The record gives the reactivity of an RNA of 177 nucleotides to DMS and 2A3. As a SHAPE reagent, 2A3 marks flexible, mostly unpaired nucleotides at the ribose 2'-OH. For 2A3 the reverse transcriptase was SuperScript II with manganese.

RNA sequence: GGGAACGACUCGAGUAGAGUCGAAAAUCAUGCACGUUCGCGUGCAUGAAAAGGCGGCGAGUAUCGCUCAGCGGCGCGCUACAGCGCGCAGCGCAGCUCGAAAAAGAUGAAUCUUCGGAUUCAUCAACUUGACUAUAAAGUUCGCUUUAUAGUCAAGAAAAGAAACAACAACAACAAC
Reactivity to DMS in 0.01 (KOAc 150mM, MgCl2 10mM, bicine 150mM(pH8.5), 24C), signal-to-noise 8, nucleotides 027 to 126: u000c010a000u000g000c000a010c000g020u000u010c220g020c010g030u010g000c000a000u000g000a000a050a100a160g000g000c030g000g010c020g000a040g010u000a070u010c040g010c010u000c110a100g010c010g000g010c010g020c010g020c030u010a110c300a180g000c010g030c020g010c000a010g010c030g010c180a070g010c020u000c040g000a090a060a080a110a110g000a010u000g010a010a000u000c000u000u010c160g020g010a010u000u000c000a000u000c000a040a080
Reactivity to 2A3 in 0.01 (KOAc 150mM, MgCl2 10mM, bicine 150mM(pH8.5), 24C), signal-to-noise 7, nucleotides 027 to 126: u020c000a000u000g000c000a000c010g030u050u040c210g010c000g120u010g000c000a000u000g000a000a010a000a010g050g020c040g010g010c030g020a020g030u080a120u300c030g010c030u060c080a020g010c010g040g000c010g000c010g000c040u160a160c070a090g010c000g000c010g000c020a010g000c020g000c020a010g000c000u030c030g060a100a070a010a000a030g000a000u000g000a000a000u000c010u050u100c270g080g000a000u010u000c000a000u000c000a000a020

It was measured as part of the RMDB library M2PK50.